Chemical mapping of a 177-nucleotide RNA with DMS and 2A3. The DMS profile rests on 7,703 reads. The 2A3 profile rests on 1,703 reads. High DMS reactivity at an A or C suggests that its Watson-Crick edge is free.
RNA sequence: GGGAACGACUCGAGUAGAGUCGAAAAAAUGAUUGUGAGUGUGGACUCCCAAAAGAGUAUUUGAUCUCAGGGUUAUAUGAAAAGGAGAGGGAGUUAAAUCCGGUAGCCAGGAUGUUUACCUUAAUGACCCAAUUAUACGAUUCGUCGUAUAAUUGGGAAAAGAAACAACAACAACAAC
Reactivity to DMS in 0.01 (KOAc 150mM, MgCl2 10mM, bicine 150mM(pH8.5), 24C), signal-to-noise 6, nucleotides 027 to 126: a080a040u000g000a080u000u000g020u000g010a060g010u010g020u000g010g010a080c050u000c010c010c030a060a080a100a110g010a090g030u000a060u000u000u010g010a090u000c010u000c070a120g000g010g010u010u000a050u000a060u010g000a070a060a070a110g020g000a100g010a150g020g010g000a050g010u010u000a050a060a090u010c010c030g000g010u000a080g010c040c050a080g000g000a050u000g010u000u000u000a090c050c020u000u000a070a090u000g000a290
Reactivity to 2A3 in 0.01 (KOAc 150mM, MgCl2 10mM, bicine 150mM(pH8.5), 24C), signal-to-noise 2, nucleotides 027 to 126: a010a010u190g010a060u120u150g020u010g090a060g030u050g020u070g040g000a000c020u000c000c000c010a040a040a020a050g050a000g020u100a120u170u090u170g090a090u040c010u000c050a010g000g030g040u080u040a070u040a060u210g110a130a130a040a030g090g040a100g020a050g040g010g010a030g000u010u010a050a000a020u050c020c000g050g010u010a010g030c020c010a010g020g020a010u050g020u060u130u060a090c010c000u060u070a100a050u160g060a060